This 177-nucleotide RNA was probed chemically with DMS and 2A3. The DMS profile rests on 2,394 reads. Values cover nucleotides 27 to 126. For DMS the reverse transcriptase was MarathonRT.
RNA sequence: GGGAACGACUCGAGUAGAGUCGAAAAGAUAUGGAGGAUGUCAGGACAUGUCUCGAGGUCGGAAACGACCUCCGGACAACAGCCUGCAUCCUCCUAAGUCAAACUAGAUAUCUUCGGAUAUCUAGAAGCUUUUAAAACUGUUCGCAGUUUUAAAAGCAAAAGAAACAACAACAACAAC
Reactivity to DMS in 0.01 (KOAc 150mM, MgCl2 10mM, bicine 150mM(pH8.5), 24C), signal-to-noise 3, nucleotides 027 to 126: g010a030u000a050u000g000g000a010g020g000a010u000g000u020c010a000g020g020a060c140a110u030g010u000c000u010c300g010a010g000g010u000c000g010g010a010a010a030c010g020a030c000c000u000c000c070g010g000a050c000a040a060c230a140g000c020c000u000g000c000a000u000c010c000u000c000c000u000a000a050g000u000c000a090a160a270c000u000a000g000a020u000a000u000c000u010u010c230g040g010a010u000a000u000c000u000a010g000a100a130
Reactivity to 2A3 in 0.01 (KOAc 150mM, MgCl2 10mM, bicine 150mM(pH8.5), 24C), signal-to-noise 2, nucleotides 027 to 126: g020a000u000a000u080g010g030a000g000g020a000u020g170u300c040a010g000g010a050c160a300u290g000u000c030u000c020g000a010g000g020u000c000g000g000a000a000a010c000g010a000c030c010u000c000c020g010g020a010c010a080a020c110a110g020c000c000u010g000c000a000u020c000c000u020c000c000u000a000a000g000u010c010a010a030a060c010u010a000g010a010u000a000u000c010u030u080c300g120g010a000u010a020u000c010u000a000g000a000a030